RNA sequence: GGGAACGACUCGAGUAGAGUCGAAAAACUACACCUUCGGGCUGGCCGAGCAGGCGGUAUUCCACGAGGUCGACGUGGACAAGAUUGACCGGGUCCGUGGCAUGGACAUCAACGUCGUCACUUCCGCCGUACUCCAAGCAUUCGUGCUUGGAGUACGAAAAGAAACAACAACAACAAC
Reactivity to 2A3 in 0.01 (KOAc 150mM, MgCl2 10mM, bicine 150mM(pH8.5), 24C), signal-to-noise 3, nucleotides 027 to 126: a030c040u150a060c040a070c040c030u050u040c030g000g040g050c080u060g070g030c020c030g020a030g050c030a050g000g000c010g000g030u090a130u140u010c000c010a020c020g020a030g000g080u040c020g030a050c010g020u040g040g020a020c040a080a080g050a170u100u210g010a060c030c060g030g000g000u000c010c010g050u060g060g010c130a090u160g050g010a000c010a030u140c030a060a050c030g040u050c020g010u010c020a020c090u070u040c010c030g040c010
Reactivity to DMS in 0.01 (KOAc 150mM, MgCl2 10mM, bicine 150mM(pH8.5), 24C), signal-to-noise 3, nucleotides 027 to 126: a030c080u010a080c140a130c040c030u000u000c050g000g010g000c110u000g020g010c050c020g000a100g000c080a070g020g020c020g010g010u000a120u000u000c010c010a020c060g010a120g030g000u010c040g010a110c020g030u000g010g020a020c300a070a090g010a090u000u000g000a060c030c050g000g040g000u010c050c020g000u000g010g010c060a160u010g000g020a020c030a090u000c080a040a080c130g010u000c020g010u010c030a110c110u000u000c010c000g000c090